[RMDB]
RNA sequence: GGGAACGACUCGAGUAGAGUCGAAAAAACCUGCUGUAUUGAGUGACAAUGAUCCCAGACUGGAAGUUAAAUUGACUGAAUCAUUAUUCUCUAAGUACAAGGGGAAUGUAAAUACGGAACCCACUGAAUAGCCUACGAAAUUCGUUUCGUAGGCUAUAAAAGAAACAACAACAACAAC
Reactivity to DMS in 0.01 (KOAc 150mM, MgCl2 10mM, bicine 150mM(pH8.5), 24C), signal-to-noise 4, nucleotides 027 to 126: a130a060c000c010u000g020c090u000g000u000a020u020u000g000a020g060u010g010a090c270a050a050u000g020a080u010c100c060c000a040g000a140c080u030g000g010a090a090g010u020u040a050a040a130u020u000g030a070c050u000g010a220a030u000c010a010u010u010a030u000u010c000u010c000u000a050a070g030u040a050c110a070a140g000g000g000g040a060a110u050g010u010a060a050a060u020a100c180g020g030a200a100c020c000c000a080c070u030g000a100
Reactivity to 2A3 in 0.01 (KOAc 150mM, MgCl2 10mM, bicine 150mM(pH8.5), 24C), signal-to-noise 3, nucleotides 027 to 126: a000a000c060c050u100g130c110u060g060u050a060u050u070g000a030g060u060g000a000c020a020a050u050g010a010u070c140c180c000a000g080a030c000u040g020g180a170a030g040u100u190a030a230a290u190u100g100a110c020u070g030a030a030u000c020a020u010u110a100u150u010c010u000c040u100a210a040g050u030a000c100a100a110g020g000g030g000a000a060u080g010u140a090a090a050u200a050c020g010g050a010a060c000c020c000a020c020u010g010a030
The data come from the RNA Mapping Database (RMDB), library OK1LIB. Structure probing data (DMS and 2A3) for a 177-nucleotide construct. For 2A3 the reverse transcriptase was SuperScript II with manganese. For DMS, 4,520 sequencing reads were counted.